[RMDB]
RNA sequence: GGGAACGACUCGAGUAGAGUCGAAAACAAUGAAUCUUGAUAUUAUCACUCCUAUACAUGCACCGUAUUUAGCUUCAUUAGAUUAUGUCAAAUUAAGUAUUGAUGCAAUUCAGUGGGGAGUUAAACAAAUUUACGGACGAUUCGUCGUCCGUAAAUUAAAAGAAACAACAACAACAAC
Reactivity to DMS in 0.01 (KOAc 150mM, MgCl2 10mM, bicine 150mM(pH8.5), 24C), signal-to-noise 2, nucleotides 027 to 126: c090a130a080u020g000a050a160u000c030u000u010g000a140u000a150u050u030a110u030c100a090c010u010c010c010u010a070u050a040c080a070u010g000c030a040c020c080g030u020a000u020u010u000a020g000c020u010u000c040a030u030u000a120g000a110u030u010a010u000g000u030c130a000a000a000u000u010a020a040g000u040a000u010u040g020a020u000g010c010a020a040u030u010c120a100g020u000g000g010g010g010a010g010u000u000a030a050a140c270a030
Reactivity to 2A3 in 0.01 (KOAc 150mM, MgCl2 10mM, bicine 150mM(pH8.5), 24C), signal-to-noise 5, nucleotides 027 to 126: c050a000a180u210g130a090a060u030c050u110u130g100a090u120a120u260u180a160u230c070a000c020u010c000c000u080a080u090a300c050a010u060g010c000a000c030c020g010u010a060u020u010u040a030g000c010u010u040c010a040u060u070a090g050a230u140u170a040u260g080u060c110a000a090a110u010u040a010a000g000u020a030u020u300g060a060u000g000c010a070a170u140u180c020a060g020u060g040g040g000g000a030g020u030u080a030a100a000c040a020
This 177-nucleotide RNA was probed chemically with DMS and 2A3. DMS adducts were read by reverse transcription with MarathonRT.